[RMDB]
RNA sequence: GGGAACGACUCGAGUAGAGUCGAAAACCCUCCACUAAGUCAUGGGAGCUGAAUGUAUGUGUUUCUCCGUUGUCCUGCAUGUGGUGGGUUGAUGGCAAGCACUUCAUGAGACUUGCCUGACUCAGAGAAAUACUAAGUAAUUCGUUACUUAGUAUUUAAAAGAAACAACAACAACAAC
Reactivity to 2A3 in 0.01 (KOAc 150mM, MgCl2 10mM, bicine 150mM(pH8.5), 24C), signal-to-noise 9, nucleotides 027 to 126: c000c000c000u000c000c000a020c010u100a080a110g050u110c020a050u160g090g020g010a020g020c060u060g110a140a080u110g090u280a110u110g190u050g060u060u110u030c040u000c010c020g040u040u050g060u100c020c030u040g050c040a100u130g010u020g040g020u010g010g000g000u000u020g030a050u050g000g000c000a000a010g000c040a060c180u150u120c090a160u240g100a030g030a170c010u000u000g010c000c000u000g020a010c000u010c020a030g060a000g060
Reactivity to DMS in 0.01 (KOAc 150mM, MgCl2 10mM, bicine 150mM(pH8.5), 24C), signal-to-noise 9, nucleotides 027 to 126: c010c000c000u000c010c010a020c020u010a120a100g010u020c040a040u020g010g010g000a050g010c300u010g010a090a060u020g010u020a070u020g010u010g010u010u000u000c010u000c020c050g010u000u000g000u010c080c040u010g010c110a090u020g010u000g000g010u000g000g000g010u000u000g000a110u010g000g000c040a010a010g010c070a120c070u010u010c220a150u020g010a100g000a270c000u000u000g000c000c000u000g000a130c020u000c010a120g010a180g010
Chemical mapping of a 177-nucleotide RNA with 2A3 and DMS. Conditions: 150 mM KOAc, 10 mM MgCl2 and 150 mM bicine (pH 8.5), 24 C. For 2A3 the reverse transcriptase was SuperScript II with manganese. DMS adducts were read by reverse transcription with MarathonRT. Source: RMDB libraries RFM100 and RFMREP, as collected in RNAgym. Values are in units of 0.01, from 0 to 300, in steps of 10.